An RNA of 177 nucleotides, treated with DMS and read out base by base. Reactivities are given for positions 27 through 126. The RNA was probed in 150 mM KOAc, 10 mM MgCl2 and 150 mM bicine (pH 8.5) at 24 C. Source: RMDB library RFMREP, as collected in RNAgym.

RNA sequence: GGGAACGACUCGAGUAGAGUCGAAAAGGGGUUGAAAUGUGGGUGUUUGAAACAAAAGUGUAUAAACAAAUGAAUUGUUGAUAACUUAGUUAUUGACCUGGAGACUGGUAGCUUAUUAAAGAAACUCGGAUUUAGUAUACUUCGGUAUACUAAAUCCAAAAGAAACAACAACAACAAC
Reactivity to DMS in 0.01 (KOAc 150mM, MgCl2 10mM, bicine 150mM(pH8.5), 24C), signal-to-noise 1, nucleotides 027 to 126: g010g010g000g010u000u010g010a110a060a050u000g010u000g020g010g010u010g000u000u020u000g020a110a090a060c010a020a070a050a060g050u000g000u010a060u000a080a050a040c030a030a030a150u030g010a080a180u010u000g000u010u000g000a030u020a010a040c030u010u010a240g000u010u010a080u000u000g020a070c010c100u000g010g000a110g010a090c050u000g000g040u010a070g010c040u000u000a070u030u000a020a110a100g010a050a030a040c210u010c210